This 207-nucleotide RNA was probed chemically with DMS and 2A3. 2A3 adducts were read by reverse transcription with SuperScript II with manganese. The DMS profile rests on 1,288 reads.

RNA sequence: GGGAACGACUCGAGUAGAGUCGAAAAGAGAACCUCUCAGGCCACCAUGACAUAUCCCAGCAUUGGACCAGCCCCUGAAUAAACUGGAAAGACGCCUGGUCUGGCUUCAGUUACAGGGAGCACCACCAGGGAACAUCUCGGGGAGCCUGGUUGGAAGCCACACAUAAACUUUCGAGUUUAUGUGUGGAAAAGAAACAACAACAACAAC
Reactivity to DMS in 0.01 (KOAc 150mM, MgCl2 10mM, bicine 150mM(pH8.5), 24C), signal-to-noise 1, nucleotides 027 to 156: g000a150g020a080a020c010c010u010c000u000c040a090g030g100c020c020a100c000c030a120u010g030a110c100a100u000a070u000c010c010c000a170g010c160a160u010u000g000g030a200c020c020a240g040c060c010c000c050u020g010a160a220u000a060a070a080c000u060g010g080a130a160a130g050a010c090g000c110c050u000g000g010u000c040u020g020g000c050u000u000c030a060g080u000u000a220c140a050g000g040g000a060g000c060a300c010c020a000c010c010a090g000g020g020a050a170c040a080u000c150u000c020g000g000g090g000a120g000c000c000u000g020g020u010u000g020g000a060a060g030
Reactivity to 2A3 in 0.01 (KOAc 150mM, MgCl2 10mM, bicine 150mM(pH8.5), 24C), signal-to-noise 3, nucleotides 027 to 156: g140a010g020a030a050c010c010u040c020u020c040a020g000g000c010c010a030c040c000a110u030g030a050c030a070u130a030u050c000c000c010a020g050c060a170u030u190g040g020a100c040c000a020g000c000c010c000c000u010g010a070a060u100a100a120a010c010u030g020g020a050a030a050g070a030c030g110c160c140u210g210g040u030c080u050g030g020c000u050u040c020a010g000u020u030a040c020a000g010g020g010a050g010c010a020c010c010a020c000c050a050g010g000g020a010a060c040a080u060c030u060c110g010g010g000g010a010g010c000c000u000g000g000u010u020g040g010a050a030g040

For 2A3, 1,572 sequencing reads were counted.